RNA sequence: GGGAACGACUCGAGUAGAGUCGAAAAGGCUCCCACUUCGGUGGGAGCCAAAGCUGAACGCGCAGCAAGCGUUAAACAUGGAAAAACGGACGUCCAAUGCGCAAAGCUUCCCCUUCGGGGGAAGCAAGAUCACUUAUGAGUUCGCUCAUAAGUGAUCAAAAGAAACAACAACAACAAC
Reactivity to 2A3 in 0.01 (KOAc 150mM, MgCl2 10mM, bicine 150mM(pH8.5), 24C), signal-to-noise 4, nucleotides 027 to 126: g010g000c010u000c010c020c000a010c010u040u060c220g100g000u000g000g010g010a010g000c000c000a010a000a000g010c000u020g050a070a010c090g000c000g000c010a010g000c020a020a010g000c000g000u020u050a100a230a010c070a180u220g180g080a130a060a010a030a070c080g070g020a000c000g010u000c010c000a040a010u000g000c000g000c000a040a040a040g000c000u010u010c000c010c000c010u010u090c210g040g000g010g000g000a000a000g000c000a000a020
Reactivity to DMS in 0.01 (KOAc 150mM, MgCl2 10mM, bicine 150mM(pH8.5), 24C), signal-to-noise 4, nucleotides 027 to 126: g010g030c010u000c000c010c000a020c000u000u010c190g010g040u000g000g020g000a030g000c000c010a010a010a080g030c080u010g010a090a080c210g020c000g000c010a000g010c110a240a300g000c020g000u010u000a040a070a100c150a120u010g020g010a070a060a040a090a110c190g010g000a020c030g020u000c000c030a120a220u000g000c010g030c030a070a080a100g010c000u000u000c000c000c000c000u010u010c140g030g000g000g000g030a000a020g000c000a010a030